RNA sequence: GGGAACGACUCGAGUAGAGUCGAAAACAUUCAUCUCAUUGGCCGUGUAGUUCAUGUCUAUGCCUCAUCCCGUUAUGCAUAGGCGCCCGAACAUGAUGGCAACGCUGGAAAUGUUUAUUUCGAGCGUUCCUCAUAUGGCUUUCGAGCCAUAUGAGGAAAAAGAAACAACAACAACAAC
Reactivity to DMS in 0.01 (KOAc 150mM, MgCl2 10mM, bicine 150mM(pH8.5), 24C), signal-to-noise 3, nucleotides 027 to 126: c300a280u020u010c100a060u000c060u020c060a180u010u010g010g000c000c000g020u000g010u040a020g000u000u010c030a060u040g000u000c000u000a000u010g000c010c240u030c120a110u000c040c030c010g010u010u010a080u040g010c010a030u000a010g000g020c010g000c160c090c170g000a010a010c010a000u000g000a020u010g000g020c050a050a050c040g000c040u000g000g010a000a010a020u000g000u010u010u030a030u010u000u000c000g020a020g010c020g010u000
Reactivity to 2A3 in 0.01 (KOAc 150mM, MgCl2 10mM, bicine 150mM(pH8.5), 24C), signal-to-noise 9, nucleotides 027 to 126: c010a050u150u160c040a100u050c090u030c060a140u140u200g140g000c010c000g000u010g100u150a030g010u010u000c010a020u050g010u000c000u000a000u000g000c000c050u100c030a160u140c020c020c000g070u160u130a070u210g020c010a000u010a000g000g010c010g010c020c060c070g010a010a000c010a030u200g000a020u020g000g010c010a000a010c010g000c020u050g050g080a010a010a020u090g100u110u300u230a060u040u020u010c040g040a010g000c000g020u010